[RMDB]
RNA sequence: GGGAACGACUCGAGUAGAGUCGAAAAUCUCUUAUUUCUUCCUUCUGAGAAGAGGAGACAGCUUGCCGCUCGCCCCCAGACCCGAGAUGAGCCUCGUGCCGAGGAGAGGCCGGAGACGGAGAGGCAGAUAGGAUGUCGUUCGCGACAUCCAAAAGAAACAACAACAACAAC
Reactivity to 2A3 in 0.01 (KOAc 150mM, MgCl2 10mM, bicine 150mM(pH8.5), 24C), signal-to-noise 4, nucleotides 027 to 129: u000c000u000c000u080u120a200u080u110u030c030u030u090c030c010u110u090c100u120g070a100g000a110a010g010a020g010g010a020g000a000c020a020g010c030u110u250g020c010c010g040c020u070c050g050c000c000c000c000c000a010g010a060c000c030c000g040a020g020a050u040g000a010g000c000c020u010c030g020u050g020c010c020g000a020g000g000a010g000a010g040g000c030c000g010g010a010g020a030c040g050g000a060g000a000g010g000c010a000g020a110u200a030
Reactivity to DMS in 0.01 (KOAc 150mM, MgCl2 10mM, bicine 150mM(pH8.5), 24C), signal-to-noise 3, nucleotides 027 to 129: u010c030u030c000u030u050a090u000u000u000c050u020u010c030c020u030u020c070u000g020a160g000a100a010g000a070g080g000a030g010a060c100a080g010c070u010u030g060c040c030g020c040u020c070g090c050c020c050c040c060a120g020a100c270c040c000g000a000g030a040u040g020a060g020c000c000u020c000g050u050g020c000c000g020a000g000g000a000g020a050g070g000c000c030g090g000a000g020a080c130g010g030a040g000a020g030g110c120a090g020a080u050a100
Record summary:
Conditions: 150 mM KOAc, 10 mM MgCl2 and 150 mM bicine (pH 8.5), 24 C. Structure probing data (2A3 and DMS) for a 170-nucleotide construct. 2A3 adducts were read by reverse transcription with SuperScript II with manganese. The 2A3 profile rests on 7,580 reads. DMS adducts were read by reverse transcription with MarathonRT.